Annotation:
Conditions: 150 mM KOAc, 10 mM MgCl2 and 150 mM bicine (pH 8.5), 24 C. The record gives the reactivity of an RNA of 177 nucleotides to DMS and 2A3. It was measured as part of the RMDB library M2PK50. For 2A3 the reverse transcriptase was SuperScript II with manganese. DMS adducts were read by reverse transcription with MarathonRT. Reactivities are given for positions 27 through 126. The 2A3 profile rests on 2,329 reads.
RNA sequence: GGGAACGACUCGAGUAGAGUCGAAAACCUUCAUUGUUCGCAAUGAAGGAAAUAAAAGCCACGAAGCACCAAUAAAACGUGGCAUGGUGCAAAGAAAAAUAAAAAGCCUCUGCUUCGGCAGAGGCAACAGAUGUCAUUAGUUCGCUAAUGACAUCUGAAAAGAAACAACAACAACAAC
Reactivity to DMS in 0.01 (KOAc 150mM, MgCl2 10mM, bicine 150mM(pH8.5), 24C), signal-to-noise 2, nucleotides 027 to 126: c000c000u000u000c010a020u000u000g000u010u000c240g080c000a000a000u020g000a010a000g000g000a060a060a070u000a120a120a090a100g030c010c000a000c020g010a210a080g060c030a100c000c000a070a120u030a060a060a030a090c060g010u000g030g000c000a000u030g000g000u020g030c050a070a120a100g000a030a060a040a110a150u030a030a070a130a180a080g000c010c000u010c000u000g000c010u010u000c270g040g000c000a000g000a000g000g000c000a000a040
Reactivity to 2A3 in 0.01 (KOAc 150mM, MgCl2 10mM, bicine 150mM(pH8.5), 24C), signal-to-noise 2, nucleotides 027 to 126: c000c000u000u000c000a020u010u010g040u040u080c190g040c060a000a010u000g000a000a000g000g010a010a000a000u030a000a060a020a020g000c000c000a010c090g110a090a010g000c000a020c020c000a040a010u150a210a170a050a030c030g010u000g020g000c000a010u020g000g000u020g020c010a000a110a020g100a020a140a040a020a030u220a030a180a100a050a050g020c000c000u010c000u000g000c000u050u050c130g080g000c020a000g000a000g030g000c000a000a000